[RMDB]
RNA sequence: GGGAACGACUCGAGUAGAGUCGAAAAGAUGGGUCCGAUGGAUUAAUGCGUCGCCUGCCAUUGGAUCCUGAUUGAUAGAUUGACGGCGACGGUCGGAUCACUCGGUAAUUCGGUGCUCAACGAGUGAUCCGUGAUGAUAGUUAAGAUGAGCACCUAACAGGCAUAAUGCUUUCGAGCAUUAUGCCUGAAAAGAAACAACAACAACAAC
Reactivity to 2A3 in 0.01 (KOAc 150mM, MgCl2 10mM, bicine 150mM(pH8.5), 24C), signal-to-noise 1, nucleotides 027 to 156: g130a100u060g000g000g000u000c020c020g000a000u000g000g000a010u100u220a220a110u260g070c000g000u000c020g020c000c000u000g010c000c000a000u000u000g000g000a000u040c000c000u000g000a020u000u120g090a000u020a120g190a110u000u300g100a010c080g020g000c000g000a000c000g000g020u020c000g000g000a000u000c000a000c000u010c000g080g070u070a050a160u180u110c020g010g020u000g050c000u000c000a000a000c000g000a000g020u000g000a000u010c000c000g000u000g060a040u020g010a000u010a150g210u260u210a110a020g060a080u040g000a000g040c000a010c000c000u000a020a030
Source: RMDB library OK3TST, as collected in RNAgym. Structure probing data (2A3) for a 207-nucleotide construct. The reactions ran in a buffer of 150 mM KOAc, 10 mM MgCl2 and 150 mM bicine (pH 8.5), at 24 C. 2A3 adducts were read by reverse transcription with SuperScript II with manganese. Reactivities are rounded to 0.1 and cut off at 0 and 3.